[RMDB]
Structure probing data (DMS and 2A3) for a 207-nucleotide construct. 2A3 adducts were read by reverse transcription with SuperScript II with manganese. For DMS, 5,656 sequencing reads were counted. The 2A3 profile rests on 2,182 reads.
RNA sequence: GGGAACGACUCGAGUAGAGUCGAAAAUUGUUACACCAGUGGUUAAUGGUAGUAUUUUGCGCAUGGGUGUUGAUGAUGGUGCGUGUAAACAUGGUUCUACUUUUAUAAAUAAGGUUGUCAGUAUUAAUGGUACUGUAAUCUUAGUUAAUGUUGGGCCCAUGUGCACAGUAUUCGUACUGUGCACAUGAAAAGAAACAACAACAACAAC
Reactivity to DMS in 0.01 (KOAc 150mM, MgCl2 10mM, bicine 150mM(pH8.5), 24C), signal-to-noise 2, nucleotides 027 to 156: u010u010g010u000u000a090c050a090c010c020a120g040u000g010g020u010u010a040a100u000g020g030u000a070g020u000a050u000u010u000u000g030c070g000c040a150u000g000g000g020u020g020u000u000g010a100u000g010a090u010g020g010u000g020c040g120u010g030u000a060a070a050c090a100u010g020g040u000u000c030u000a050c000u010u000u020u010a140u000a090a030a080u000a010a020g000g000u020u000g010u020c000a010g040u000a020u000u000a060a180u000g030g010u040a010c000u000g000u010a010a000u000c010u000u000a030g000u000u000a040a100u000g010u000u010g000g000g020c060c030
Reactivity to 2A3 in 0.01 (KOAc 150mM, MgCl2 10mM, bicine 150mM(pH8.5), 24C), signal-to-noise 4, nucleotides 027 to 156: u080u070g030u020u070a060c040a010c030c020a020g010u030g060g050u100u110a080a030u080g030g030u020a050g000u010a140u040u110u020u090g060c080g000c080a110u090g050g020g000u010g020u020u060g010a060u030g010a010u050g000g030u030g020c070g000u050g040u070a070a100a020c050a050u050g000g000u020u010c010u010a050c000u110u110u070u030a230u050a060a150a080u030a000a000g000g000u010u000g150u180c000a000g000u000a000u040u090a140a100u130g080g030u000a010c000u000g000u000a000a000u000c000u000u000a010g000u030u080a130a080u070g000u020u030g000g010g020c000c010